[RMDB]
The record gives the reactivity of an RNA of 177 nucleotides to 2A3 and DMS.
Conditions: 150 mM KOAc, 10 mM MgCl2 and 150 mM bicine (pH 8.5), 24 C.
It was measured as part of the RMDB library OK2TST.
RNA sequence: GGGAACGACUCGAGUAGAGUCGAAAAGAUUCUUCCGAAUUUCGUCAUAUUGGGUUCGCAAUUUUUGGCGAUGGCUUUGCUUCGAUAUUUUUCGGAUGAAAAUAGUCAAAGGACACUAGAAACACGAUGAAUCAGGUGUAUUCGUACACCUGAUUCAAAAAGAAACAACAACAACAAC
Reactivity to 2A3 in 0.01 (KOAc 150mM, MgCl2 10mM, bicine 150mM(pH8.5), 24C), signal-to-noise 1, nucleotides 027 to 126: g040a030u090u020c010u060u010c010c000g070a070a080u050u020u060c010g020u020c030a010u020a030u160u080g180g020g000u060u100c090g000c130a080a080u100u080u060u110u160g060g000c010g020a030u030g110g000c020u050u170u110g010c000u050u090c000g010a010u020a090u130u080u070u040u030c000g060g000a000u030g000a030a000a030a090u120a000g080u050c020a040a110a000g110g010a010c000a020c070u030a010g080a030a110a010c100a000c020g100a050
Reactivity to DMS in 0.01 (KOAc 150mM, MgCl2 10mM, bicine 150mM(pH8.5), 24C), signal-to-noise 2, nucleotides 027 to 126: g010a200u000u010c050u000u020c030c040g010a060a060u000u000u000c000g020u020c040a060u000a080u000u010g000g030g020u030u010c070g020c090a050a090u000u000u000u000u000g000g000c000g000a030u000g030g030c030u000u010u000g000c060u000u000c020g040a070u000a060u000u000u010u000u000c020g010g020a030u000g010a060a040a030a110u000a070g010u000c030a050a080a080g020g000a050c100a060c110u020a050g000a090a040a080c110a070c120g020a140